[RMDB]
RNA sequence: GGGAACGACUCGAGUAGAGUCGAAAAAUAGGCUCUCCAACCCAACUGCUACUCAAUACGUCCUCGUCGUACAGAACGGUAACAUGUUUUCCGAACAUCCGCGCUUGGGUAUACGAGUAUACACCUUACAGCACCACUUACUUCGGUAAGUGGUGAACCGUAGUAAUUCGUUCGCGAAUUACUACGGAAAAGAAACAACAACAACAAC
Reactivity to 2A3 in 0.01 (KOAc 150mM, MgCl2 10mM, bicine 150mM(pH8.5), 24C), signal-to-noise 5, nucleotides 027 to 156: a010u140a040g030g040c000u010c000u020c050c030a040a040c000c000c010a040a040c040u080g000c020u060a040c010u040c070a080a060u050a100c030g070u090c010c040u070c070g100u060c040g000u060a050c030a070g070a120a030c000g040g030u060a090a030c040a160u120g060u060u050u040u060c030c020g030a030a010c020a070u090c040c050g040c020g040c110u040u030g030g000g010u030a030u010a050c010g020a010g010u030a020u050a060c070a050c020c010u070u100a070c040a070g020c010a020c000c000a000c000u000u000a000c000u010u010c020g110g000u000a000a000g000u000g000g000u000g000a010a010
Reactivity to DMS in 0.01 (KOAc 150mM, MgCl2 10mM, bicine 150mM(pH8.5), 24C), signal-to-noise 1, nucleotides 027 to 156: a260u000a040g020g020c060u000c010u000c120c000a120a040c030c040c020a080a110c060u000g000c010u010a040c020u000c020a050a150u010a090c000g030u010c020c000u000c100g000u000c120g000u000a080c050a120g000a070a170c060g010g000u000a040a150c100a060u000g010u010u000u010u040c040c040g020a090a080c060a060u010c040c040g030c020g040c080u000u030g030g000g060u000a030u000a070c070g000a130g050u000a070u000a100c040a100c040c000u000u000a010c040a130g040c000a040c010c000a000c000u010u010a030c000u000u000c280g030g020u000a000a010g010u000g030g040u000g000a020a040